RNA sequence: GGGAACGACUCGAGUAGAGUCGAAAAUCGUGACACGGCACCCACAGUAAUAGUGUCAACAGCACAUCACUGUGCCCAUAGUAACAUCAUCACAACAUCCACAGCAACUGUGUUAACAGCAUCACGCCAACAUCUACAGUAAAUGUGUUAACAGCGAUACUAGGUGAUCAUUCGUGAUCACCUAGUAAAAAGAAACAACAACAACAAC
Reactivity to 2A3 in 0.01 (KOAc 150mM, MgCl2 10mM, bicine 150mM(pH8.5), 24C), signal-to-noise 6, nucleotides 027 to 156: u090c030g040u040g030a010c020a030c100g040g050c040a020c020c050c000a030c030a020g090u100a040a090u100a130g030u010g040u060c070a050a020c040a040g040c010a020c000a020u070c010a020c060u020g010u020g020c030c030c010a130u120a070g100u070a070a090c010a090u080c020a020u070c030a010c020a120a060c010a070u010c030c020a050c030a070g050c020a040a070c030u030g010u020g020u110u060a060a010c010a020g060c000a030u100c040a030c080g020c050c000a050a050c020a140u060c040u150a050c020a030g040u130a060a100a090u090g010u000g020u020u060a060a030c050a040g040c000g040a010
Reactivity to DMS in 0.01 (KOAc 150mM, MgCl2 10mM, bicine 150mM(pH8.5), 24C), signal-to-noise 4, nucleotides 027 to 156: u000c080g050u000g030a090c040a140c060g010g000c030a070c010c040c020a080c040a070g020u020a030a010u000a140g060u010g020u010c020a170a100c100a200g000c020a000c010a050u000c060a000c050u020g020u010g000c050c020c030a140u000a110g010u010a080a070c060a050u010c060a070u010c050a100c070a080a070c040a070u000c050c010a020c020a100g020c020a070a080c030u010g020u020g010u020u000a040a120c030a050g020c030a110u000c060a080c090g030c040c010a070a080c060a060u000c030u000a030c050a080g010u000a070a100a060u000g030u010g020u000u010a050a080c060a060g010c060g020a290